Notes
Source: RMDB library OK2TRN, as collected in RNAgym. The record gives the reactivity of an RNA of 177 nucleotides to 2A3 and DMS.
RNA sequence: GGGAACGACUCGAGUAGAGUCGAAAAUUUAUCAUGGUACUGUUUAAUUGUAUCAAUUAGAGCAUCUAUACUCUCUGAAUUAUGUGCGCCAUCCAAAAUGAUUAAAGGUUUGUCAUGCACCUGCUCAGAUCAGCAAACAAUUCGUUGUUUGCUGAUCAAAAGAAACAACAACAACAAC
Reactivity to 2A3 in 0.01 (KOAc 150mM, MgCl2 10mM, bicine 150mM(pH8.5), 24C), signal-to-noise 1, nucleotides 027 to 126: u080u080u030a120u070c040a050u060g000g030u030a010c000u040g120u230u290u160a140a110u300u050g020u010a010u000c000a040a070u120u090a010g010a010g000c010a010u060c080u120a060u050a120c030u030c020u000c020u060g100a090a110u200u110a060u150g050u050g010c060g000c050c010a000u000c010c000a020a130a030a070u090g060a100u140u160a170a070a010g070g030u000u020u040g050u070c020a040u130g010c010a030c010c050u010g030c000u000c040a040
Reactivity to DMS in 0.01 (KOAc 150mM, MgCl2 10mM, bicine 150mM(pH8.5), 24C), signal-to-noise 2, nucleotides 027 to 126: u010u020u010a050u020c030a110u010g010g010u000a010c020u010g010u010u000u010a070a100u010u020g010u030a050u000c040a030a120u000u000a040g010a080g000c100a070u010c070u000a100u020a130c100u010c000u010c100u000g000a100a080u010u000a010u000g000u010g010c070g020c060c020a030u010c040c060a060a060a080a110u000g000a030u030u000a050a060a110g000g000u000u000u000g030u000c070a030u030g020c150a040c050c040u000g010c120u000c110a170